[RMDB]
RNA sequence: GGGAACGACUCGAGUAGAGUCGAAAAUUCGUCUAGAGGUUUCAAUGUGUCUAUACAAAUUGGACACUGGGCGGUACACCGCUACCAGUUGGAUGGUAACACUUAGGUAGGGGACACUCCUCUGGGAGCAUAAAUAGGCUUUCGAGCCUAUUUAUGCAAAAGAAACAACAACAACAAC
Reactivity to 2A3 in 0.01 (KOAc 150mM, MgCl2 10mM, bicine 150mM(pH8.5), 24C), signal-to-noise 3, nucleotides 027 to 126: u020u020c020g000u000c020u000a020g030a090g100g040u070u140u300c080a040a020u100g020u000g020u040c020u110a110u020a200c020a040a140a090u080u070g040g000a000c020a010c020u010g010g000g000c010g010g040u090a060c090a050c050c010g050c090u080a080c010c000a010g030u110u050g150g020a130u050g060g030u100a120a020c040a030c110u060u060a070g050g030u040a030g030g150g040g000a010c030a020c000u020c000c010u000c010u010g020g030g030a040
Reactivity to DMS in 0.01 (KOAc 150mM, MgCl2 10mM, bicine 150mM(pH8.5), 24C), signal-to-noise 4, nucleotides 027 to 126: u000u000c030g030u000c010u000a020g030a130g000g010u000u000u000c080a030a030u000g020u000g000u000c230u020a150u000a150c100a030a040a070u010u000g000g010a050c030a030c010u010g010g000g010c030g010g010u010a110c250a150c020c010g010c040u010a030c000c010a040g000u010u000g020g020a080u000g000g010u000a090a110c050a050c090u000u010a090g010g010u010a050g010g020g010g000a070c060a040c080u000c000c010u000c030u010g010g010g010a160